The record gives the reactivity of an RNA of 177 nucleotides to DMS and 2A3. As a SHAPE reagent, 2A3 marks flexible, mostly unpaired nucleotides at the ribose 2'-OH. Values cover nucleotides 27 to 126. The reactions ran in a buffer of 150 mM KOAc, 10 mM MgCl2 and 150 mM bicine (pH 8.5), at 24 C. The 2A3 profile rests on 1,922 reads.
RNA sequence: GGGAACGACUCGAGUAGAGUCGAAAAAGAGGAAAAUCAAGCCACUUCUCAGCUGGUUAUAGAGAAACUUCAGGUUAGCAAUGAAUUGCUUAAUAAAGAGUCUAUAAUUGCUCGUCAGUCUGAACAGCCUGCGUAUAGUAUUCGUACUAUACGCAGGAAAAGAAACAACAACAACAAC
Reactivity to DMS in 0.01 (KOAc 150mM, MgCl2 10mM, bicine 150mM(pH8.5), 24C), signal-to-noise 3, nucleotides 027 to 126: a090g020a040g010g000a050a060a070a070u000c140a060a100g000c010c030a090c080u000u000c040u000c040a110g010c060u000g010g000u010u000a000u010a060g010a110g000a120a080a060c040u000u000c120a040g000g010u000u000a030g020c010a020a050u010g020a130a130u000u000g010c010u000u000a040a040u000a060a050a050g010a070g000u000c010u000a010u000a030a030u010u000g010c020u000c060g020u000c090a060g000u000c030u000g010a110a090c130a120g000
Reactivity to 2A3 in 0.01 (KOAc 150mM, MgCl2 10mM, bicine 150mM(pH8.5), 24C), signal-to-noise 3, nucleotides 027 to 126: a000g080a060g000g050a100a040a040a070u150c060a020a040g020c000c010a030c020u060u020c020u010c010a020g010c020u080g030g020u070u000a060u060a060g060a000g080a090a080a040c000u040u020c040a020g050g030u110u050a010g040c020a020a050u120g060a270a220u160u030g000c000u050u040a070a000u090a090a240a010g020a010g030u000c010u040a050u030a070a050u030u070g010c010u010c030g070u040c020a000g040u000c020u050g040a050a050c010a010g160